The record gives the reactivity of an RNA of 177 nucleotides to DMS. The RNA was probed in 150 mM KOAc, 10 mM MgCl2 and 150 mM bicine (pH 8.5) at 24 C. The data come from the RNA Mapping Database (RMDB), library TTRINS.
RNA sequence: GGGAACGACUCGAGUAGAGUCGAAAAGAUAUGGAAAGCUACAAUAUGAACUACGAAGAUCAUCUAAUUGUACAUCGGAAACGAUGUACAAUUAGAUGAUUCUUCGCAUAUUUAGCUUUCCUAAGUCGAUACUAAGUGGGUUCGCCCACUUAGUAUCAAAAGAAACAACAACAACAAC
Reactivity to DMS in 0.01 (KOAc 150mM, MgCl2 10mM, bicine 150mM(pH8.5), 24C), signal-to-noise 4, nucleotides 027 to 126: g000a070u010a300u010g010g000a000a000a000g000c000u000a030c300a020a010u000a010u010g010a130a090c150u010a300c040g000a020a000g000a040u000c000a010u000c000u000a000a000u000u000g010u000a000c000a010u020c000g010g000a110a100a250c010g010a010u000g010u000a000c000a000a000u000u000a000g000a000u000g000a010u000u000c000u000u000c000g020c000a000u000a010u000u000u000a000g000c000u000u000u000c010c000u010a030a070g010u000c090